Source: RMDB library OK2TRN, as collected in RNAgym. This 177-nucleotide RNA was probed chemically with DMS.
[RMDB]
RNA sequence: GGGAACGACUCGAGUAGAGUCGAAAAGACAGUAAGAUCCUGAGAUGGAGUUGAUUUGCACAAAGAAAUAAUUGUUGCCAGCAUGCAUUUUGAAUAUUUCUCUGGAAAAAAAGAUUAGUUGGCAGUACUGUUGUGAGAAGUUCGCUUCUCACAACAGAAAAGAAACAACAACAACAAC
Reactivity to DMS in 0.01 (KOAc 150mM, MgCl2 10mM, bicine 150mM(pH8.5), 24C), signal-to-noise 1, nucleotides 027 to 126: g010a040c090a070g010u000a050a150g010a080u010c010c010u010g000a090g010a070u000g010g010a070g030u040u020g010a120u000u000u050g000c050a130c120a050a090a110g000a080a020a050u000a030a100u000u000g000u010u000g010c030c030a030g010c050a180u000g000c060a070u010u000u010u000g010a070a050u010a090u010u000u000c010u000c110u000g010g010a000a000a000a070a110a040a130g000a070u020u050a090g010u010u000g000g000c010a070g010u000a130

High DMS reactivity at an A or C suggests that its Watson-Crick edge is free. DMS adducts were read by reverse transcription with MarathonRT. Reactivities are given for positions 27 through 126.